RNA sequence: GGGAACGACUCGAGUAGAGUCGAAAAUAACUCCUACCAUCAGCUACACACUGCUUGACAUAUAUUGUUAGAAGCACCUCGCAUUUGUGGGUUCUCUUAAGCAAAAUACUUGCAUUAGGUCUCAGCUUACGCCAUUAGGGUUCGCCCUAAUGGCGUAAAAAGAAACAACAACAACAAC
Reactivity to 2A3 in 0.01 (KOAc 150mM, MgCl2 10mM, bicine 150mM(pH8.5), 24C), signal-to-noise 2, nucleotides 027 to 126: u160a000a040c080u000c000c000u040a010c040c000a040u110c000a000g080c010u080a000c030a000c000a000c060u010g000c020u090u130g030a000c080a050u210a000u090a000u080u120g040u000u060a040g020a110a000g000c020a110c010c030u050c020g050c060a090u130u020u090g080u080g000g010g070u120u030c030u020c000u020u080a090a020g090c010a020a010a010a020u130a060c050u030u050g030c000a090u040u100a040g040g000u000c020u010c040a040g010c000u000
Conditions: 150 mM KOAc, 10 mM MgCl2 and 150 mM bicine (pH 8.5), 24 C. Chemical mapping of a 177-nucleotide RNA with 2A3. Reactivities are given for positions 27 through 126.